An RNA of 177 nucleotides, treated with 2A3 and DMS and read out base by base.
The RNA was probed in 150 mM KOAc, 10 mM MgCl2 and 150 mM bicine (pH 8.5) at 24 C.
Source: RMDB library OK2TST, as collected in RNAgym.

[RMDB]
RNA sequence: GGGAACGACUCGAGUAGAGUCGAAAAAGGAUGUGGGAUGUGGUGCCGUUGUGGAAUUCUUGGCCGCGCCACCAAUCAUAGUGUUUGCCGGUGCGCCAUUGGUGGCCGUGGGCGUGCAGGAUUUGUGCAUCCCGAAGAAUUUCGAUUCUUCGGGAUGAAAAGAAACAACAACAACAAC
Reactivity to 2A3 in 0.01 (KOAc 150mM, MgCl2 10mM, bicine 150mM(pH8.5), 24C), signal-to-noise 2, nucleotides 027 to 126: a000g130g000a090u100g000u110g070g000g010a060u040g070u050g040g080u040g000c040c060g060u040u040g050u020g060g060a090a110u090u040c020u100u130g040g000c050c010g010c030g020c000c000a000c000c010a030a020u100c040a060u160a150g080u060g050u120u140u090g020c030c000g090g000u050g020c040g010c000c020a020u020u060g060g000u020g000g010c020c010g020u030g090g030g000c030g000u050g000c030a010g040g040a090u090u070u110g020u040g020
Reactivity to DMS in 0.01 (KOAc 150mM, MgCl2 10mM, bicine 150mM(pH8.5), 24C), signal-to-noise 3, nucleotides 027 to 126: a080g010g010a070u000g020u010g000g020g000a060u010g030u010g000g010u000g010c040c050g000u000u000g030u010g000g010a060a060u000u000c060u010u000g020g010c020c030g020c070g000c020c000a020c030c010a010a030u000c190a100u010a120g010u010g020u000u010u000g020c030c020g020g000u000g000c060g010c020c120a070u000u000g010g000u000g000g010c060c070g040u010g010g010g010c030g020u000g020c080a050g010g010a100u000u000u000g010u010g010